[RMDB]
The record gives the reactivity of an RNA of 177 nucleotides to DMS and 2A3.
RNA sequence: GGGAACGACUCGAGUAGAGUCGAAAAGAUAUGGAUGAAUCCUUCGAGUAAUUGCACAGAGCAAUCUUGUCGGAAACGACAAGGUUGCGACGAAGUGCAAUUACUCGAAGGAGUUCAUCCUAAGUCACCAUUAUACAUCCUUCGGGAUGUAUAAUGGAAAAGAAACAACAACAACAAC
Reactivity to DMS in 0.01 (KOAc 150mM, MgCl2 10mM, bicine 150mM(pH8.5), 24C), signal-to-noise 6, nucleotides 027 to 126: g020a050u000a300u010g010g000a010u000g000a030a090u000c000c000u000u000c000g010a020g000u000a010a000u010u000g010c000a010c010a070g000a210g000c000a010a000u000c000u000u000g000u000c000g010g010a120a120a220c010g010a010c000a000a010g010g010u000u000g010c010g000a070c280g000a090a120g000u000g000c000a000a000u000u000a000c000u000c000g010a000a000g010g010a010g000u010u000c000a000u000c000c000u000a020a100g010u000c050a300
Reactivity to 2A3 in 0.01 (KOAc 150mM, MgCl2 10mM, bicine 150mM(pH8.5), 24C), signal-to-noise 2, nucleotides 027 to 126: g030a030u120a060u220g000g000a000u000g010a010a020u020c010c010u000u000c010g000a000g000u000a010a010u000u010g010c000a010c020a020g040a020g040c000a000a010u010c000u000u000g000u000c010g040g050a090a060a080c010g000a000c000a010a000g010g010u020u000g000c000g010a010c000g020a040a030g010u000g000c010a000a000u000u000a000c000u000c000g000a000a000g000g000a000g000u020u010c000a000u010c000c000u000a010a000g020u010c020a010
Background
Reactivities are given for positions 27 through 126. The RNA was probed in 150 mM KOAc, 10 mM MgCl2 and 150 mM bicine (pH 8.5) at 24 C. For DMS the reverse transcriptase was MarathonRT. The DMS profile rests on 13,338 reads. Source: RMDB library TTRINS, as collected in RNAgym.